[RMDB]
RNA sequence: GGGAACGACUCGAGUAGAGUCGAAAAAUAGCAUUUAUAAUGUACGCGUUAAUGAGUAGGAGGGCGUGAAGGUCGUGAAGAAGCUCGUGGCGUGAGCCUGAGUGAAACGGCCUUUAGUGCAGAUCUUCUACUUUAUGGAGUUCGCUCCAUAAAGUAGAAAAGAAACAACAACAACAAC
Reactivity to DMS in 0.01 (KOAc 150mM, MgCl2 10mM, bicine 150mM(pH8.5), 24C), signal-to-noise 3, nucleotides 027 to 126: a100u010a080g010c010a050u000u000u020a090u020a100a050u020g020u010a090c200g020c110g010u010u000a100a090u010g010a060g000u010a020g000g020a030g000g000g000c030g030u010g020a000a000g010g010u000c010g010u000g020a090a130g000a120a280g010c000u000c010g020u020g000g020c000g000u020g000a170g000c000c010u000g000a000g010u000g000a050a120a010c000g000g000c000c000u000u000u000a020g020u020g010c040a070g000a130u010c010u000u000
Reactivity to 2A3 in 0.01 (KOAc 150mM, MgCl2 10mM, bicine 150mM(pH8.5), 24C), signal-to-noise 6, nucleotides 027 to 126: a000u150a020g020c020a020u020u140u080a220u110a140a080u120g070u090a050c040g000c010g070u010u060a160a060u250g060a070g040u060a020g020g090a020g020g050g000c020g010u040g020a000a000g000g000u000c010g000u020g050a100a120g040a040a020g060c000u000c050g300u090g000g000c030g020u070g010a010g000c000c000u010g000a000g010u240g010a080a040a010c000g000g010c000c000u010u010u010a010g000u000g030c010a010g000a110u000c010u000u000
The data come from the RNA Mapping Database (RMDB), libraries RFM100 and RFMREP.
Structure probing data (DMS and 2A3) for a 177-nucleotide construct.
The RNA was probed in 150 mM KOAc, 10 mM MgCl2 and 150 mM bicine (pH 8.5) at 24 C.
For 2A3 the reverse transcriptase was SuperScript II with manganese.
DMS adducts were read by reverse transcription with MarathonRT.